[RMDB]
RNA sequence: GGGAACGACUCGAGUAGAGUCGAAAAUAAAAGCGCGAAAAAGAUCGAUCGAUCGUUUGAACGCGCAAGUCUAAGUUUGAUACGGGCAUACUAGCUAGCUAGCUAGCAAAACAAUCUUAGUAAAAAAUCCGUUUUAUAGGUUCGCCUAUAAAACGGAAAAAGAAACAACAACAACAAC
Reactivity to DMS in 0.01 (KOAc 150mM, MgCl2 10mM, bicine 150mM(pH8.5), 24C), signal-to-noise 1, nucleotides 027 to 126: u010a080a050a120a140g000c000g000c000g020a070a040a040a030a000g000a000u020c000g010a150u030c200g020a010u000c000g010u000u000u000g010a190a070c010g000c000g000c060a070a050g000u010c010u010a100a010g000u000u000u000g000a110u010a140c140g010g000g030c140a160u010a070c000u000a030g000c000u000a050g010c100u030a050g010c020u000a010g000c000a100a080a130a080c010a000a000u000c030u000u000a020g000u020a000a020a140a070a040a040
Source: RMDB library M2PK90, as collected in RNAgym.
Structure probing data (DMS) for a 177-nucleotide construct.
The RNA was probed in 150 mM KOAc, 10 mM MgCl2 and 150 mM bicine (pH 8.5) at 24 C.
For DMS, 779 sequencing reads were counted.
DMS adducts were read by reverse transcription with MarathonRT.